[RMDB]
RNA sequence: GGGAACGACUCGAGUAGAGUCGAAAAGGAGGGUCGCCAAAUUUCUUUCUUGCAAGGGGUACUUACUGUCUGUGAGUGGGAGCCUCUUGUGGAUAAGGAGUGAGGGCAGAGAGGGAACAGCAGAGCCCUGGGAAGUUCUUUCCACUUGACUCUGAGAUAAUUAUAUACGAUUCGUCGUAUAUAAUUAAAAAGAAACAACAACAACAAC
Reactivity to DMS in 0.01 (KOAc 150mM, MgCl2 10mM, bicine 150mM(pH8.5), 24C), signal-to-noise 3, nucleotides 027 to 156: g000g020a100g010g000g010u000c090g040c010c040a030a180a070u000u000u000c020u000u000u000c020u010u000g060c060a030a030g020g010g080g010u010a080c030u010u000a050c020u010g010u000c150u010g020u000g020a050g040u010g010g020g020a300g020c010c000u010c010u020u010g030u010g000g000a050u000a020a030g010g000a040g020u010g000a180g020g000g020c080a090g000a140g020a120g020g010g000a040a130c050a080g000c010a050g010a080g000c040c010c110u010g020g020g000a030a050g010u010u000c050u000u000u000c000c000a070c080u010u000g010a040c010u000c010u000g000a160g010a240
Reactivity to 2A3 in 0.01 (KOAc 150mM, MgCl2 10mM, bicine 150mM(pH8.5), 24C), signal-to-noise 2, nucleotides 027 to 156: g040g030a020g000g020g050u120c060g040c060c000a020a100a070u030u080u030c000u040u070u030c060u110u280g000c000a000a010g020g000g020g020u040a060c010u060u060a030c020u100g210u300c090u190g190u170g130a000g000u050g000g060g010a080g090c000c000u020c000u010u010g000u010g000g000a070u090a200a020g000g000a000g020u050g030a050g000g040g000c080a010g040a010g020a020g020g010g050a080a070c000a050g030c020a010g030a020g020c010c020c030u030g000g010g010a020a000g030u120u100c000u110u020u010c020c010a160c050u050u050g010a050c000u000c010u050g050a060g020a080
This 207-nucleotide RNA was probed chemically with DMS and 2A3. Conditions: 150 mM KOAc, 10 mM MgCl2 and 150 mM bicine (pH 8.5), 24 C. Source: RMDB library OK3TST, as collected in RNAgym. For DMS the reverse transcriptase was MarathonRT.